About this RNA
Chemical mapping of a 177-nucleotide RNA with 2A3 and DMS. 2A3 adducts were read by reverse transcription with SuperScript II with manganese. For 2A3, 1,308 sequencing reads were counted. The data come from the RNA Mapping Database (RMDB), library OK2TST. Conditions: 150 mM KOAc, 10 mM MgCl2 and 150 mM bicine (pH 8.5), 24 C.
[RMDB]
RNA sequence: GGGAACGACUCGAGUAGAGUCGAAAAGCGCAGCGCCAGCACCUUGCCGAGCCUGAUGGUUUCAUUGGCCUUGCGGCCCACCACGAUCAAAGCCGCAAGCGAGGCAAGAGCCAUCAAUGUGGAAAGAAUUUAUCCCCUGAUUCGUCAGGGGAUAAAUAAAAGAAACAACAACAACAAC
Reactivity to 2A3 in 0.01 (KOAc 150mM, MgCl2 10mM, bicine 150mM(pH8.5), 24C), signal-to-noise 1, nucleotides 027 to 126: g030c050g000c020a040g000c020g040c020c000a010g010c000a040c000c030u010u070g050c020c010g020a020g050c030c020u020g030a040u020g010g060u030u220u160c030a040u070u100g090g150c000c000u010u000g010c010g000g030c050c000c010a050c030c020a050c040g090a060u180c120a030a030a010g000c030c030g000c000a030a020g040c070g100a080g060g000c010a010a020g000a000g010c000c010a010u000c020a010a080u190g010u090g050g050a120a140a050g120a070
Reactivity to DMS in 0.01 (KOAc 150mM, MgCl2 10mM, bicine 150mM(pH8.5), 24C), signal-to-noise 4, nucleotides 027 to 126: g020c060g020c060a040g010c060g020c020c030a060g000c060a090c070c020u010u000g020c030c030g000a150g020c070c100u000g010a040u000g010g010u000u000u000c050a140u000u000g000g000c020c010u000u000g010c010g000g000c000c060c060a120c150c090a100c150g000a090u000c100a070a130a220g010c010c020g000c020a010a030g000c120g000a080g010g030c030a020a050g000a070g000c000c020a020u010c020a050a070u000g010u000g000g010a120a090a070g010a100